The data come from the RNA Mapping Database (RMDB), library OK3TST. An RNA of 207 nucleotides, treated with DMS and 2A3 and read out base by base. For DMS, 1,606 sequencing reads were counted. For DMS the reverse transcriptase was MarathonRT. The 2A3 profile rests on 589 reads. The RNA was probed in 150 mM KOAc, 10 mM MgCl2 and 150 mM bicine (pH 8.5) at 24 C.
[RMDB]
RNA sequence: GGGAACGACUCGAGUAGAGUCGAAAAUUUUCUAUUCAUCCUUACCCUUUUCACGCAAAAGUAGGCGGAGAUAAAUCUGUGAGACCGACUGGAAAAUGUAUCUAUCAGAGUGAAGUGCAUAUCAUGCUAUCAGUUUCCAAGAAGCUUAUUUCCCACAAAAAUACCACGGAUUCGUCCGUGGUAUUUUAAAAGAAACAACAACAACAAC
Reactivity to DMS in 0.01 (KOAc 150mM, MgCl2 10mM, bicine 150mM(pH8.5), 24C), signal-to-noise 1, nucleotides 027 to 156: u010u010u000u000c030u000a070u000u000c050a080u000c020c020u020u010a090c000c010c010u000u000u000u000c020a200c130g010c110a050a070a060a150g000u000a070g020g000c020g030g020a100g000a070u000a020a070a090u010c070u000g020u000g000a060g000a170c020c050g020a110c040u000g000g010a040a000a040a040u000g010u010a050u000c040u000a090u000c080a200g010a110g000u000g020a040a080g020u000g000c020a100u000a070u000c070a030u000g030c010u000a090u000c020a080g020u000u000u000c020c020a080a300g000a070a300g000c020u000u000a080u000u000u000c000c020c000a040c120a030
Reactivity to 2A3 in 0.01 (KOAc 150mM, MgCl2 10mM, bicine 150mM(pH8.5), 24C), signal-to-noise 2, nucleotides 027 to 156: u060u040u010u030c010u050a090u060u070c010a080u090c070c000u000u100a090c020c000c010u050u050u020u090c170a140c040g040c050a040a090a030a120g020u090a150g040g030c060g130g000a030g010a020u030a020a180a080u090c070u000g070u030g020a080g060a090c030c040g060a030c020u100g000g050a050a030a020a000u060g030u050a040u070c030u060a080u060c020a020g090a060g110u120g030a040a030g010u040g010c030a040u100a070u210c080a030u130g040c000u030a030u090c000a020g030u020u050u010c050c020a030a050g140a000a000g000c040u020u000a030u050u070u020c000c070c020a020c030a030